Description:
The record gives the reactivity of an RNA of 177 nucleotides to DMS. It was measured as part of the RMDB library OK2TST. The RNA was probed in 150 mM KOAc, 10 mM MgCl2 and 150 mM bicine (pH 8.5) at 24 C.
RNA sequence: GGGAACGACUCGAGUAGAGUCGAAAAUCGCGCUGAUGGCGUUCCUAGUGGUGGGAACCGUUUUUUUGGCCGGGCGAUACCCCGUCGACGGCCACAGCACCGGAUUGAGCUUGUGGAACAACCAUGGUCAUCUAAGAGCCUUCGGGCUCUUAGAUGAAAAAGAAACAACAACAACAAC
Reactivity to DMS in 0.01 (KOAc 150mM, MgCl2 10mM, bicine 150mM(pH8.5), 24C), signal-to-noise 1, nucleotides 027 to 126: u010c060g000c070g020c090u020g030a090u010g010g000c100g030u010u000c000c010u010a080g020u000g040g010u000g000g010g000a070a060c100c050g000u000u000u010u010u010u000u010g020g000c010c020g020g000g020c020g000a010u000a160c040c000c000c010g000u000c010g000a130c010g000g000c000c000a040c180a030g030c060a080c110c060g000g000a070u010u000g000a150g010c040u000u000g030u000g010g020a070a090c100a090a060c060c010a060u010g030g000